[RMDB]
RNA sequence: GGGAACGACUCGAGUAGAGUCGAAAAAUCAGGUACGAUGUACAUGAUGGCCACGGCCUACGGCCGAUCACGAUAGCUGGUACGGUACACACAGCUGCGCCUCGAUCGAUCGGCGCUGCGAUCCGUGAACGACUAGCAUAUUCGUAUGCUAGUCGUUAAAAGAAACAACAACAACAAC
Reactivity to DMS in 0.01 (KOAc 150mM, MgCl2 10mM, bicine 150mM(pH8.5), 24C), signal-to-noise 8, nucleotides 027 to 126: a030u000c010a020g010g030u000a010c020g010a200u010g020u000a010c020a050u000g010a020u000g000g010c120c020a050c030g000g010c060c020u000a100c110g000g010c010c000g010a040u010c050a100c080g010a040u000a050g020c100u000g000g010u010a070c070g000g000u010a110c120a120c200a110c130a090g010c010u000g010c050g010c060c060u010c030g010a070u000c100g000a060u000c030g000g000c020g010c020u000g010c080g000a080u000c020c020g000u000g000
Reactivity to 2A3 in 0.01 (KOAc 150mM, MgCl2 10mM, bicine 150mM(pH8.5), 24C), signal-to-noise 4, nucleotides 027 to 126: a000u040c020a010g000g030u020a020c090g160a300u300g010u040a010c020a020u050g010a020u030g070g000c050c030a020c020g010g010c000c030u060a050c060g030g010c000c010g010a020u020c030a000c080g050a060u060a030g030c050u010g020g080u090a050c060g050g120u190a070c080a010c010a000c020a110g010c010u040g010c030g050c010c030u070c040g090a200u070c060g020a030u050c020g040g000c070g030c040u030g010c020g030a050u050c020c010g000u010g080
The record gives the reactivity of an RNA of 177 nucleotides to DMS and 2A3. 2A3 adducts were read by reverse transcription with SuperScript II with manganese.